[RMDB]
RNA sequence: GGGAACGACUCGAGUAGAGUCGAAAAGCUGGCUCCACAUCCGAUCGUCGCUGAAGCGUCGCGCCCCCUCGCCCGGAGCUUCUCUCUGGCUACUACCCGGUGGAUACAACUGAAGCUUCAACCCCAACUCAUAUCAUAGGUUCGCCUAUGAUAUGAGAAAAGAAACAACAACAACAAC
Reactivity to DMS in 0.01 (KOAc 150mM, MgCl2 10mM, bicine 150mM(pH8.5), 24C), signal-to-noise 3, nucleotides 027 to 126: g010c090u010g000g030c030u000c010c030a050c050a060u000c080c050g000a120u020c050g020u000c020g010c030u020g020a110a130g000c050g030u000c040g030c140g000c020c000c010c000c010u000c060g000c050c030c080g020g010a060g000c020u000u000c040u010c040u010c100u010g010g020c010u010a030c050u000a080c050c040c050g000g000u000g000g010a090u000a080c060a050a050c070u000g010a070a050g010c020u010u000c040a050a170c050c000c010c020a090a220
This 177-nucleotide RNA was probed chemically with DMS. It was measured as part of the RMDB library VIROID. For DMS the reverse transcriptase was MarathonRT. The RNA was probed in 150 mM KOAc, 10 mM MgCl2 and 150 mM bicine (pH 8.5) at 24 C.